The record gives the reactivity of an RNA of 177 nucleotides to DMS and 2A3.
DMS adducts were read by reverse transcription with MarathonRT.
The RNA was probed in 150 mM KOAc, 10 mM MgCl2 and 150 mM bicine (pH 8.5) at 24 C.
The data come from the RNA Mapping Database (RMDB), library OK2TRN.
The DMS profile rests on 7,897 reads.

[RMDB]
RNA sequence: GGGAACGACUCGAGUAGAGUCGAAAAGCCUCGUCCAGCGUUGGCAGGUCGGCAGCAUGGGCAAGGCGGAUCAAAAGCAUUUCAGCCGCCUGAACCGGCCUCGUCGCCGUAUCCACUUCCGCAAUGAUAUAUUUUAGGCUUUCGAGCCUAAAAUAUAAAAAGAAACAACAACAACAAC
Reactivity to DMS in 0.01 (KOAc 150mM, MgCl2 10mM, bicine 150mM(pH8.5), 24C), signal-to-noise 6, nucleotides 027 to 126: g010c020c010u000c060g010u000c020c040a080g010c070g040u010u010g010g000c050a070g000g030u000c030g000g000c060a060g030c060a100u000g010g010g010c070a100a040g010g010c000g010g010a090u010c140a060a080a100a130g010c170a110u010u000u000c130a130g010c010c020g010c020c010u000g000a120a120c090c040g000g000c020c020u000c150g010u000c050g020c020c010g010u000a070u000c010c020a090c070u000u000c030c020g000c100a100a070u010g000a190
Reactivity to 2A3 in 0.01 (KOAc 150mM, MgCl2 10mM, bicine 150mM(pH8.5), 24C), signal-to-noise 3, nucleotides 027 to 126: g020c020c000u020c030g040u000c000c000a030g000c030g060u090u090g030g040c100a050g010g040u050c020g000g010c020a030g000c030a090u150g060g000g000c070a030a040g020g000c040g000g000a030u110c060a030a100a110a100g070c120a120u000u130u180c050a040g020c000c000g020c000c000u000g010a030a020c010c010g010g040c000c030u040c040g070u040c020g000c030c010g010u010a060u010c010c010a040c020u100u020c030c020g060c060a050a100u140g050a010